[RMDB]
RNA sequence: GGGAACGACUCGAGUAGAGUCGAAAACGCAAAACAGUGAGUGGACGGAAGAAAUCCCCUUCCCACCUCCCCACUGUCCACUCACUGUCUUCCUAAUAGGAAAUAUAAAUCGGGGGUGGGAAGGGGACCUGGCAUUACCGUUCGCGGUAAUGCCAGGAAAAGAAACAACAACAACAAC
Reactivity to 2A3 in 0.01 (KOAc 150mM, MgCl2 10mM, bicine 150mM(pH8.5), 24C), signal-to-noise 3, nucleotides 027 to 126: c160g030c040a100a110a000a000c000a000g010u000g010a010g000u000g000g000a000c030g040g010a080a020g050a080a170a060u050c000c000c000c000u000u000c000c000c000a010c000c000u030c040c070c030c010a050c030u050g000u000c000c030a010c020u000c000a000c000u000g000u010c000u000u020c000c000u070a160a060u150a110g080g150a020a050a000u300a040u120a040a080a060u290c120g010g000g000g000g000u000g000g000g000a010a000g010g000g000g000a000